[RMDB]
RNA sequence: GGGAACGACUCGAGUAGAGUCGAAAAGAUAUGGAUGCCGGUGGAUAGACACCUGAUGACCUGUCGUAACAUCAUCUCGGAAACGAGAUGUGGACAGCAAGGGUGCUAUCCACCGGCAUCCUAAGUCGUUUGUUAGAUACUUCGGUAUCUAACAAACAAAAGAAACAACAACAACAAC
Reactivity to DMS in 0.01 (KOAc 150mM, MgCl2 10mM, bicine 150mM(pH8.5), 24C), signal-to-noise 2, nucleotides 027 to 126: g000a120u010a300u000g000g000a000u000g020c000c020g050g060u000g010g010a040u000a000g010a240c000a020c000c020u010g010a110u010g010a170c300c010u000g000u000c010g030u010a100a190c170a090u000c000a000u000c020u000c000g020g000a130a110a230c010g000a010g000a000u000g020u000g000g000a020c000a000g000c080a020a180g010g000g000u000g000c000u010a010u000c010c010a000c010c020g010g000c000a000u000c000c010u000a000a090g020u000c080
This 177-nucleotide RNA was probed chemically with DMS.
Reactivities are given for positions 27 through 126.
The reactions ran in a buffer of 150 mM KOAc, 10 mM MgCl2 and 150 mM bicine (pH 8.5), at 24 C.